[RMDB]
The record gives the reactivity of an RNA of 177 nucleotides to DMS and 2A3.
Values cover nucleotides 27 to 126.
The data come from the RNA Mapping Database (RMDB), library TTRDEL.
For DMS, 14,668 sequencing reads were counted.
The reactions ran in a buffer of 150 mM KOAc, 10 mM MgCl2 and 150 mM bicine (pH 8.5), at 24 C.
2A3 adducts were read by reverse transcription with SuperScript II with manganese.
As a SHAPE reagent, 2A3 marks flexible, mostly unpaired nucleotides at the ribose 2'-OH.

RNA sequence: GGGAACGACUCGAGUAGAGUCGAAAAGAUAUGGAUCAUGGACAUGCGUGCACGGUCGGAAACGACCGCCCAACGCAACAGCCCGCUGAUCCUAAGUCAAACACAUCGAAGUUCGCUUCGAUGUGAACUUGUAUAAUGGGUUCGCCCAUUAUACAAGAAAAGAAACAACAACAACAAC
Reactivity to DMS in 0.01 (KOAc 150mM, MgCl2 10mM, bicine 150mM(pH8.5), 24C), signal-to-noise 9, nucleotides 027 to 126: g010a030u010a300u010g000g000a010u000c010a040u010g010g010a020c030a230u000g010c000g020u000g010c300a060c010g000g000u000c010g000g000a080a110a210c010g010a010c000c000g030c300c210c050a170a020c010g010c000a020a070c180a110g010c000c000c010g010c220u000g010a020u000c000c010u010a030a100g000u000c030a100a110a260c010a010c000a010u000c000g010a020a010g010u000u010c260g010c000u000u000c000g010a010u000g000u000g000a030a070
Reactivity to 2A3 in 0.01 (KOAc 150mM, MgCl2 10mM, bicine 150mM(pH8.5), 24C), signal-to-noise 8, nucleotides 027 to 126: g030a020u080a030u160g000g000a000u000c010a030u170g010g000a070c070a130u180g000c010g020u020g010c080a010c040g000g000u000c000g010g030a070a080a030c010g000a000c010c000g000c020c000c010a040a010c020g010c010a040a130c050a090g040c010c000c000g020c040u000g000a000u010c010c000u020a130a030g040u030c040a080a100a050c000a000c000a000u000c000g010a010a000g030u090u170c230g130c190u000u000c000g010a000u000g010u000g000a010a020